An RNA of 177 nucleotides, treated with 2A3 and DMS and read out base by base. 2A3 adducts were read by reverse transcription with SuperScript II with manganese. High DMS reactivity at an A or C suggests that its Watson-Crick edge is free. The DMS profile rests on 900 reads. The 2A3 profile rests on 765 reads.
RNA sequence: GGGAACGACUCGAGUAGAGUCGAAAACAUCACUGGCCAGAUUGUCAUUAGCCAAUUUGUUUCAAAACAGAUGGUUAUGUGCUAAAUUGCUUUUGAUCAAAUCCAUCUGGGGCCAAAUGGUUAUCGACGUGUAAUGGCUGUUCGCAGCCAUUACACGAAAAGAAACAACAACAACAAC
Reactivity to 2A3 in 0.01 (KOAc 150mM, MgCl2 10mM, bicine 150mM(pH8.5), 24C), signal-to-noise 1, nucleotides 027 to 126: c000a020u000c000a000c070u060g000g040c000c000a050g010a110u000u050g010u040c000a060u080u040a010g040c040c000a030a050u050u030u060g110u000u170u070c000a060a080a000a020c010a010g090a070u080g000g000u070u050a130u110g100u060g100c060u040a080a150a170u120u110g040c060u010u100u060u150g050a040u110c040a040a080a040u030c000c000a010u000c000u040g000g090g030g090c010c040a070a110a050u060g020g000u070u090a170u090c100g050a060
Reactivity to DMS in 0.01 (KOAc 150mM, MgCl2 10mM, bicine 150mM(pH8.5), 24C), signal-to-noise 1, nucleotides 027 to 126: c190a060u000c050a060c030u000g010g010c020c040a130g010a100u040u010g010u000c030a090u020u000a060g030c060c010a010a020u000u000u000g000u000u000u000c120a030a070a120a080c010a030g010a040u000g020g010u000u030a120u010g000u020g000c120u040a070a040a080u010u010g000c140u000u000u000u000g010a060u030c080a020a070a080u010c040c030a020u010c020u000g000g040g000g050c080c010a030a080a050u000g000g000u010u000a060u000c130g000a140